[RMDB]
RNA sequence: GGGAACGACUCGAGUAGAGUCGAAAAUAAUUGAUCUGUAGAAUCUGUCAAGCAAAACACCAAAACCUUACACUGAGAGCAUUUAGCCUGAUUACUCUUUAAAUCAAAUCAGGCAAUAGAGAGAAACAAAAUCCGUGACUGUUCGCAGUCACGGAAAGACAGGGUAACUGUUCGCAGUUACCCUGUCAAAAGAAACAACAACAACAAC
Reactivity to 2A3 in 0.01 (KOAc 150mM, MgCl2 10mM, bicine 150mM(pH8.5), 24C), signal-to-noise 1, nucleotides 027 to 156: u190a050a100u010u010g000a020u000c020u030g090u120a080g040a260a100u020c060u210g010u020c040a060a010g000c020a030a030a100a020c010a050c010c050a070a100a100a000c100c040u100u070a070c130a030c100u290g020a000g000a000g030c020a010u070u000u020a050g000c000c000u040g010a000u000u010a020c020u000c020u140u290u160a000a020a110u120c090a000a010a010u000c000a000g000g000c000a000a000u000a000g030a000g030a000g020a000a070a000c030a000a210a000a040u000c030c000g000u000g010a000c000u000g080u010u160c300g060c070a000g000u070c000a000c000g000g000a000a000a000